[RMDB]
RNA sequence: GGGAACGACUCGAGUAGAGUCGAAAACUGUAUAUUUUGGAUGAACCAACCACGGGCCUACACUUCCACGAUAUUCAGCAACUAUUGAGCGUUCUUCACCGCUUGCGUGACCAUGGCAAUACCGUGACAUGACUGGCUCAUUCGUGAGCCAGUCAUGAAAAGAAACAACAACAACAAC
Reactivity to 2A3 in 0.01 (KOAc 150mM, MgCl2 10mM, bicine 150mM(pH8.5), 24C), signal-to-noise 1, nucleotides 027 to 126: c000u000g070u100a100u020a090u140u080u110u050g060g000a050u040g050a120a030c070c050a060a010c030c040a100c110g010g000g060c010c000u030a000c080a030c080u060u000c030c000a040c000g010a000u060a060u050u050c020a010g000c060a090a030c070u030a060u160u100g010a020g060c000g010u000u030c000u100u080c030a030c000c030g140c090u060u070g000c030g110u060g000a030c000c010a120u060g000g040c050a030a030u010a080c040c000g020u010g020a010
Reactivity to DMS in 0.01 (KOAc 150mM, MgCl2 10mM, bicine 150mM(pH8.5), 24C), signal-to-noise 1, nucleotides 027 to 126: c010u010g010u000a050u000a050u000u000u000u000g020g000a060u010g000a090a090c030c040a100a080c120c130a080c100g010g000g010c070c060u000a080c140a090c110u010u010c010c010a110c060g000a040u010a020u000u000c020a010g010c080a060a120c110u000a080u020u000g000a060g000c000g030u010u000c050u000u000c080a040c110c090g010c110u000u000g020c060g000u000g000a060c070c010a060u010g020g030c060a040a080u020a150c040c060g000u000g000a190
An RNA of 177 nucleotides, treated with 2A3 and DMS and read out base by base. Conditions: 150 mM KOAc, 10 mM MgCl2 and 150 mM bicine (pH 8.5), 24 C. The data come from the RNA Mapping Database (RMDB), library OK2TST.